[RMDB]
RNA sequence: GGGAACGACUCGAGUAGAGUCGAAAAAGGAUAGGUGUGAGAUGUCGUUGCACUCCGAGUUUCAGCAUGGACGGACUCGUUAAACAAGUCUAUGUACCAAUAGAUGCAGACGAUUAUUCGUAUGCAAUGGCUGCCUGAUUAGCACAAGUUAAUUCAGCUUACUUAUAGGCUUCGGCCUAUAAGUAAGAAAAGAAACAACAACAACAAC
Reactivity to DMS in 0.01 (KOAc 150mM, MgCl2 10mM, bicine 150mM(pH8.5), 24C), signal-to-noise 3, nucleotides 027 to 156: a040g030g020a060u000a040g000g020u000g020u000g000a110g010a100u020g030u000c030g030u000u000g000c040a100c030u000c110c000g010a040g010u000u000u000c000a110g000c030a060u000g010g040a010c020g010g000a040c010u010c030g030u010u000a010a030a030c060a020a030g000u000c000u010a010u010g020u000a130c120c080a080a160u010a090g000a190u010g040c030a030g000a020c020g020a070u000u000a240u000u000c010g020u010a010u010g020c000a030a130u000g020g020c010u000g010c020c030u000g000a080u000u000a060g010c020a120c140a040a150g020u000u000a040a110u010u010c070a160g000
Reactivity to 2A3 in 0.01 (KOAc 150mM, MgCl2 10mM, bicine 150mM(pH8.5), 24C), signal-to-noise 7, nucleotides 027 to 156: a000g140g010a060u070a050g000g050u040g030u060g060a060g010a100u080g040u090c040g050u060u070g020c020a020c050u020c050c000g000a010g010u020u020u030c010a020g010c020a030u030g010g020a020c010g020g030a010c010u010c020g130u070u050a020a020a010c030a040a000g000u000c010u020a030u060g020u030a110c020c010a050a030u070a110g120a100u080g010c020a010g010a050c040g010a020u120u070a070u230u170c010g000u020a020u010g000c000a000a020u030g030g020c040u030g030c000c000u070g010a100u060u060a010g000c020a020c030a180a060g040u050u070a080a060u090u050c010a010g010
An RNA of 207 nucleotides, treated with DMS and 2A3 and read out base by base. It was measured as part of the RMDB library ARCHII. For 2A3, 7,067 sequencing reads were counted. For 2A3 the reverse transcriptase was SuperScript II with manganese. The RNA was probed in 150 mM KOAc, 10 mM MgCl2 and 150 mM bicine (pH 8.5) at 24 C. The DMS profile rests on 5,837 reads.